[RMDB]
RNA sequence: GGGAACGACUCGAGUAGAGUCGAAAAGAUAUGGACUACAUGCGUCACGGAUGACGUUGGGAGCAGUAAUCGGAAACGAUUAUACUGCAUCGAUCAACUCAUCCGUGACGCAUGUAGUCCUAAGUCAUCUAACCACCUAGUUCGCUAGGUGGUUAGAAAAAGAAACAACAACAACAAC
Reactivity to DMS in 0.01 (KOAc 150mM, MgCl2 10mM, bicine 150mM(pH8.5), 24C), signal-to-noise 2, nucleotides 027 to 126: g010a060u000a300u010g040g000a030c000u000a000c010a010u010g000c000g040u010c000a000c010g000g020a020u010g000a000c300g010u010u010g000g000g000a050g020c000a000g000u000a010a030u010c000g000g040a190a180a300c010g000a050u000u010a190u010a110c000u000g010c000a190u030c150g010a060u010c010a000a000c000u000c000a010u000c010c000g020u000g000a000c000g010c000a010u000g000u000a000g000u010c000c000u000a000a070g000u010c050a240